[RMDB]
RNA sequence: GGGAACGACUCGAGUAGAGUCGAAAAACACCUUAUACACAGUAUAUUGUCACCAUGCCGUCUGGGACCUCUGGUUAUUGCCAACAGACACCGCUCUAUGUAGAGUGUGGUUCUUGGACACCAUAUAGAGUUCAUGCAUAUGGUUGUGAUAAGGCUAGAUCUCUGUAUCCUUCGGGAUACAGAGAUCAAAAGAAACAACAACAACAAC
Reactivity to 2A3 in 0.01 (KOAc 150mM, MgCl2 10mM, bicine 150mM(pH8.5), 24C), signal-to-noise 3, nucleotides 027 to 156: a000c030a030c000c000u020u010a040u120a040c020a000c020a020g140u060a140u030a070u240u200g080u110c030a030c080c030a020u030g050c020c030g110u110c070u120g090g020g000a070c000c020u040c020u030g050g000u130u010a140u160u300g010c000c010a010a020c010a090g010a000c020a010c030c040g000c000u000c000u030a170u200g160u190a030g020a030g020u060g060u000g000g090u050u030c060u010u030g030g030a010c010a010c010c020a020u070a000u030a170g030a010g030u040u090c100a060u110g030c000a040u020a020u130g060g000u100u020g010u000g010a000u010a020a010g010g000c010u020a030